Annotation:
The data come from the RNA Mapping Database (RMDB), library OK3TST. The record gives the reactivity of an RNA of 207 nucleotides to 2A3. The 2A3 profile rests on 447 reads. Values cover nucleotides 27 to 156. Conditions: 150 mM KOAc, 10 mM MgCl2 and 150 mM bicine (pH 8.5), 24 C.
RNA sequence: GGGAACGACUCGAGUAGAGUCGAAAAAUAUUGAUCAAGGUACUCAGAUCCACAGAGAUCAGGACAUUGGACACUCUAGGAAAUUAAUGAGAUUAUAUGAAAUAAAAGUUGAGCGGAACAAGUAAACACUCAAUGUAUGUGCUACCUUUGCCAGAAAGGUCCAUUUCAAUUUCGAUUGAAAUGGACCAAAAGAAACAACAACAACAAC
Reactivity to 2A3 in 0.01 (KOAc 150mM, MgCl2 10mM, bicine 150mM(pH8.5), 24C), signal-to-noise 1, nucleotides 027 to 156: a000u150a020u000u030g020a000u070c040a040a000g040g020u020a040c000u000c020a020g000a100u000c030c000a020c020a130g150a010g000a010u060c010a000g000g000a000c000a000u000u120g020g000a000c000a090c020u050c020u060a090g060g060a030a030a070u070u040a060a130u070g000a050g030a000u060u080a040u110a010u300g020a070a070a110u190a100a080a000a000g040u010u010g020a000g000c000g000g000a130a040c030a110a000g070u090a000a090a000c000a000c060u030c000a050a010u030g000u150a050u090g050u020g000c010u000a030c000c000u110u060u090g130c030c080a010g150a030a060a230